[RMDB]
RNA sequence: GGGAACGACUCGAGUAGAGUCGAAAAGAAAGAAAGUGAGGCUGAUACUUUUUCCUUAACUCAUGCCGCUGUGCCUUUAUAUUUUAUUUCACAAUUGUAUGAGUUGAGUACAGAGUAUCAGUCCAAAAUUCCUACUAGUUUUCGAACUAGUAGGAAUAAAAGAAACAACAACAACAAC
Reactivity to DMS in 0.01 (KOAc 150mM, MgCl2 10mM, bicine 150mM(pH8.5), 24C), signal-to-noise 7, nucleotides 027 to 126: g010a120a110a090g010a080a100a090g010u010g010a130g010g010c010u000g000a010u000a000c000u000u010u000u000u020c200c000u000u000a000a000c000u000c000a000u000g010c000c050g000c040u000g000u000g010c290c200u010u010u020a040u020a100u040u020u010u010a040u000u010u020c010a010c010a010a020u010u000g000u000a010u010g000a020g010u000u000g000a000g000u000a070c170a040g000a010g000u000a000u000c000a010g010u000c010c020a020a040a090
Reactivity to 2A3 in 0.01 (KOAc 150mM, MgCl2 10mM, bicine 150mM(pH8.5), 24C), signal-to-noise 9, nucleotides 027 to 126: g090a010a070a010g100a050a100a010g120u110g050a120g020g000c000u000g000a000u000a000c000u010u010u000u030u040c010c000u000u000a000a000c000u000c000a000u000g010c000c010g000c010u000g000u010g030c010c050u100u220u030a170u050a200u160u230u160u090a090u060u140u070c000a010c000a010a020u030u010g000u010a000u000g000a000g000u000u000g000a000g000u010a010c020a020g010a000g010u000a000u000c000a000g000u000c000c000a000a000a000

An RNA of 177 nucleotides, treated with DMS and 2A3 and read out base by base. High 2A3 reactivity points to a flexible backbone, as in loops and unpaired stretches. DMS adducts were read by reverse transcription with MarathonRT. The reactions ran in a buffer of 150 mM KOAc, 10 mM MgCl2 and 150 mM bicine (pH 8.5), at 24 C.